[RMDB]
RNA sequence: GGGAACGACUCGAGUAGAGUCGAAAAUUGAUGGACGUCCAUACUUGAAGUUGACAGCAUAGUUACGGUACGAGGACCACCACGCGACAAACCGCACAACCACGAGCACACCACCAAGACCCACCACCUCGCUUCACAAUUUCGAUUGUGAAGCGAGAAAAGAAACAACAACAACAAC
Reactivity to 2A3 in 0.01 (KOAc 150mM, MgCl2 10mM, bicine 150mM(pH8.5), 24C), signal-to-noise 3, nucleotides 027 to 126: u080u120g070a080u070g000g030a060c060g080u010c020c020a070u030a190c050u090u140g130a120a050g020u070u070g060a090c000a020g040c010a110u080a110g040u060u080a060c010g000g050u040a010c050g020a020g000g070a000c010c000a020c000c010a050c000g020c010g030a040c040a040a040a010c010c010g010c030a010c020a040a060c020c020a040c070g020a000g000c020a040c000a020c060c020a000c010c000a030a000g020a090c000c000c000a000c010c030a030c000
Reactivity to DMS in 0.01 (KOAc 150mM, MgCl2 10mM, bicine 150mM(pH8.5), 24C), signal-to-noise 1, nucleotides 027 to 126: u000u010g010a000u020g000g010a100c020g020u050c070c090a080u060a040c110u000u060g000a080a160g000u060u020g000a170c070a070g000c050a000u000a070g060u000u000a060c110g000g000u020a000c050g000a300g020g000a020c050c050a080c060c010a040c000g030c000g000a100c140a030a090a000c120c070g000c020a010c220a090a090c090c030a000c040g000a020g000c020a030c020a070c000c100a020c050c020a040a300g000a000c000c000c000a080c120c020a040c120